[RMDB]
RNA sequence: GGGAACGACUCGAGUAGAGUCGAAAACAAAUCAACAACAACUACGUGCCAGGGAGUUUCAGACACAACAUGAACCGCACAAGCUGUCACGGUUUCGACUCGAAAUGUUACUUACAAUACGAAAGCAAAUUCACCGAAAUGACACCCACAGCUAACAUGUUGUGAGAAGUUUCGACUUCUCACAACAAAAAGAAACAACAACAACAAC
Reactivity to DMS in 0.01 (KOAc 150mM, MgCl2 10mM, bicine 150mM(pH8.5), 24C), signal-to-noise 2, nucleotides 027 to 156: c040a120a130a160u000c080a050a090c050a080a040c030a050a130c010u000a080c130g010u000g040c060c000a110g000g010g010a140g030u000u010u000c080a180g000a160c050a100c050a060a060c040a100u010g000a060a070c000c040g010c000a070c000a090a140g030c050u010g000u000c060a120c040g040g000u000u000u010c000g030a040c040u000c040g000a090a100a090u000g000u000u010a090c050u000u000a100c110a120a110u010a070c050g000a160a020a110g000c040a030a020a100u000u000c070a120c010c000g000a060a070a050u000g000a110c050a040c020c020c020a030c050a040g010c030u000a040a070c100a110
Reactivity to 2A3 in 0.01 (KOAc 150mM, MgCl2 10mM, bicine 150mM(pH8.5), 24C), signal-to-noise 6, nucleotides 027 to 156: c030a010a070a080u220c040a020a090c010a030a030c010a020a030c040u140a030c070g020u040g050c050c030a060g010g040g000a120g030u030u060u070c050a060g060a060c070a010c010a220a000c010a070u060g050a050a030c030c010g060c030a040c010a120a020g020c030u030g020u030c010a000c050g030g000u010u010u010c020g000a020c020u000c010g020a030a020a050u100g020u040u050a050c030u070u050a030c030a030a090u060a100c060g080a100a020a010g040c040a040a030a140u080u070c020a040c080c000g010a040a020a060u100g010a010c010a040c040c010c010a040c020a020g020c010u040a050a050c010a100